[RMDB]
RNA sequence: GGGAACGACUCGAGUAGAGUCGAAAAGAUAUGGAUGCCUCCUGAACUACAGAGGGACUCGGAAACGAGUCCUAGUCUGCAGGAAGGCAUCCUAAGUCAAAUCUCCCUUAGUUCGCUAAGGGAGAAAGAAGACUUAACGGUUCGCCGUUAAGUCUUCAAAAGAAACAACAACAACAAC
Reactivity to DMS in 0.01 (KOAc 150mM, MgCl2 10mM, bicine 150mM(pH8.5), 24C), signal-to-noise 2, nucleotides 027 to 126: g000a020u010a150u000g000g030a010u000g000c000c000u000c000c000u010g010a190a120c190u030a300c020a000g030a130g010g000g000a000c000u010c020g010g010a030a040a100c000g010a020g000u000c010c000u000a010g030u000c000u010g000c000a030g000g030a060a070g030g010c000a000u000c000c000u020a000a070g010u000c010a060a210a110u010c000u000c010c010c000u010u000a000g010u010u010c300g040c020u010a000a000g000g000g020a000g000a000a050a090
Reactivity to 2A3 in 0.01 (KOAc 150mM, MgCl2 10mM, bicine 150mM(pH8.5), 24C), signal-to-noise 1, nucleotides 027 to 126: g000a030u020a020u070g000g000a030u020g000c010c010u040c000c000u070g140a300a300c150u210a110c300a030g000a010g000g000g010a000c000u020c010g000g000a000a010a010c010g020a000g010u000c000c000u000a000g040u000c010u110g110c000a000g000g060a020a160g020g010c000a000u000c000c000u010a000a010g000u010c010a050a050a170u000c010u020c000c000c000u000u020a030g020u060u060c300g000c250u000a000a000g020g020g000a010g010a000a010a000